[RMDB]
RNA sequence: GGGAACGACUCGAGUAGAGUCGAAAAGCUCGGAGCGUAAUCGCGACUUGACGUGAGUAGGGAUAGACUAGACUGUAGGCUAUCCCAGUGUGCAUAGCGCACAAUACGCUGAUCUACAGUCAACAAAGAGACUAUGUAUCUUCGGAUACAUAGUCUCAAAAGAAACAACAACAACAAC
Reactivity to 2A3 in 0.01 (KOAc 150mM, MgCl2 10mM, bicine 150mM(pH8.5), 24C), signal-to-noise 6, nucleotides 027 to 126: g090c020u020c040g080g060a040g000c010g020u020a030a030u010c010g000c010g090a140c090u170u260g110a070c010g020u030g010a020g020u080a130g010g000g000a000u000a000g020a010c010u010a070g000a010c010u010g000u010a000g020g000c000u000a000u000c000c000c000a000g000u010g000u010g000c040a110u170a280g070c040g000c050a000c000a010a020u040a010c020g000c020u020g020a060u040c000u020a010c000a000g010u010c010a010a030c030a020a080a010
Reactivity to DMS in 0.01 (KOAc 150mM, MgCl2 10mM, bicine 150mM(pH8.5), 24C), signal-to-noise 5, nucleotides 027 to 126: g000c020u000c010g010g010a050g010c000g020u000a050a230u000c010g040c020g010a230c240u000u010g010a110c030g000u000g000a020g010u000a120g010g000g000a030u000a010g010a060c030u010a060g010a020c010u000g020u000a010g000g000c010u010a010u000c010c000c000a020g030u000g020u000g000c000a200u000a090g000c200g000c010a010c010a030a040u000a010c020g010c000u000g000a110u000c070u010a010c000a010g010u000c010a170a110c240a060a110a090